[RMDB]
RNA sequence: GGGAACGACUCGAGUAGAGUCGAAAACAUGUGCAGUUCGCUGCACAUGAAAAAACCUUUGUGUGUUGACGUACUCGGGUGGCGACCCAUUGGGUCGACCAUCUCUAGCGUGGUACGAUGGCACUCUGGUAAAAAGUCUUUUCUUCGGAAAAGACAACACAAUCAAGAGAUUCGUCUCUUGAUUGUGAAAAGAAACAACAACAACAAC
Reactivity to DMS in 0.01 (KOAc 150mM, MgCl2 10mM, bicine 150mM(pH8.5), 24C), signal-to-noise 2, nucleotides 027 to 156: c010a010u000g030u000g010c020a040g040u000u010c300g040c020u000g020c010a000c010a010u000g000a000a060a070a080a090a040c020c010u000u000u000g000u010g010u010g010u010u030g020a270c050g010u010a020c010u000c050g000g010g040u000g010g000c000g030a010c000c000c020a260u030u000g040g010g000u000c020g010a130c000c000a000u000c010u000c030u000a110g010c100g020u010g030g010u000a010c020g010a130u000g000g000c010a040c010u010c040u000g020g010u010a060a090a100a080a090g020u000c000u000u000u000u000c010u000u010c300g000g000a020a010a010a050g010a010c000a040a130
Reactivity to 2A3 in 0.01 (KOAc 150mM, MgCl2 10mM, bicine 150mM(pH8.5), 24C), signal-to-noise 4, nucleotides 027 to 156: c000a000u020g000u000g000c000a010g010u050u140c210g110c130u000g000c000a000c000a010u000g000a050a020a000a000a000a000c050c010u060u100u080g060u020g010u010g050u090u040g130a060c010g010u000a010c010u010c040g000g000g000u000g000g000c000g010a010c010c000c040a060u100u300g010g000g000u000c010g130a300c020c000a010u000c020u000c080u070a100g100c090g110u190g030g010u020a000c000g020a080u010g030g000c000a000c000u010c050u040g010g030u110a090a050a060a040a020g000u010c010u000u020u010u010c010u060u090c210g040g000a000a000a000a000g000a010c000a000a020

An RNA of 207 nucleotides, treated with DMS and 2A3 and read out base by base. Values cover nucleotides 27 to 156. It was measured as part of the RMDB library RNAMAK. DMS adducts were read by reverse transcription with MarathonRT.